Background
The data come from the RNA Mapping Database (RMDB), library M2PK50. An RNA of 177 nucleotides, treated with DMS and 2A3 and read out base by base. For 2A3, 3,834 sequencing reads were counted.
[RMDB]
RNA sequence: GGGAACGACUCGAGUAGAGUCGAAAACGACAUGGCUUCGGCCAUGUCGAAAGGACGUGUGAGACCGAAACGGAGGUAGGUCCAACUACCUUCUCACUCAAAAAAUCCGUUUGUUCGCAAACGGAAACAAGUACGAUGUGUUCGCACAUCGUACUUGAAAAGAAACAACAACAACAAC
Reactivity to DMS in 0.01 (KOAc 150mM, MgCl2 10mM, bicine 150mM(pH8.5), 24C), signal-to-noise 3, nucleotides 027 to 126: c010g010a020c000a010u000g010g010c010u000u020c260g060g030c000c000a010u000g000u000c000g010a040a050a080g000g030a050c140g000u010g000u000g010a040g000a180c120c030g000a060a130a130c150g010g000a030g000g000u000a010g000g010u000c200c110a050a220c000u000a020c000c000u000u010c010u000c050a070c050u000c050a010a020a080a100a070a090u000c000c000g000u010u000u000g000u010u020c220g020c020a000a000a000c000g010g000a010a040a050
Reactivity to 2A3 in 0.01 (KOAc 150mM, MgCl2 10mM, bicine 150mM(pH8.5), 24C), signal-to-noise 2, nucleotides 027 to 126: c000g000a000c000a010u000g010g000c000u080u030c200g080g000c010c000a000u010g020u020c010g000a010a000a000g020g000a040c100g030u060g020u040g070a040g020a070c040c080g090a180a130a000c130g000g030a030g000g000u010a010g000g040u030c070c010a050a110c010u010a010c000c000u040u010c010u000c020a040c010u080c050a040a110a020a000a010a070u000c000c010g010u000u000u020g040u030u040c220g000c140a000a000a010c010g040g020a020a020a020